[RMDB]
RNA sequence: GGGAACGACUCGAGUAGAGUCGAAAAUUCUGCUAAAAAUGAUUCAACUUGUUCAGGUGACUUAGCAUUUGCUGAAUGAAGGUGUGCAAUUUUGUCGCCGUUUUUAAAUACUAGCAAGCUAGGGAUAUCAUACCCCUCUAUUCGUAGAGGGGUAUGAAAAAGAAACAACAACAACAAC
Reactivity to DMS in 0.01 (KOAc 150mM, MgCl2 10mM, bicine 150mM(pH8.5), 24C), signal-to-noise 4, nucleotides 027 to 126: u020u000c010u000g010c070u030a020a070a080a100a050u020g000a100u020u010c060a100a080c110u000u020g010u010u000c080a150g010g030u010g010a120c020u010u000a050g010c010a080u040u010u000g020c000u000g010a110a040u020g000a050a080g000g020u000g010u040g020c020a040a140u020u020u060u020g050u000c040g010c010c000g010u010u020u010u010u040a050a070a070u020a070c120u020a020g010c010a020a030g010c000u000a010g000g000g020a130u030a080
Reactivity to 2A3 in 0.01 (KOAc 150mM, MgCl2 10mM, bicine 150mM(pH8.5), 24C), signal-to-noise 4, nucleotides 027 to 126: u120u030c040u090g140c100u180a140a090a050a080a100u200g080a140u140u100c030a090a080c110u130u180g020u210u100c020a060g030g090u020g060a020c010u000u010a010g000c000a130u040u010u100g000c000u010g090a090a210u090g060a160a060g040g000u050g030u060g040c010a080a090u060u110u210u230g000u010c000g000c010c000g040u110u000u000u000u050a010a040a000u150a060c110u030a000g000c000a050a000g000c000u010a000g090g010g000a050u030a030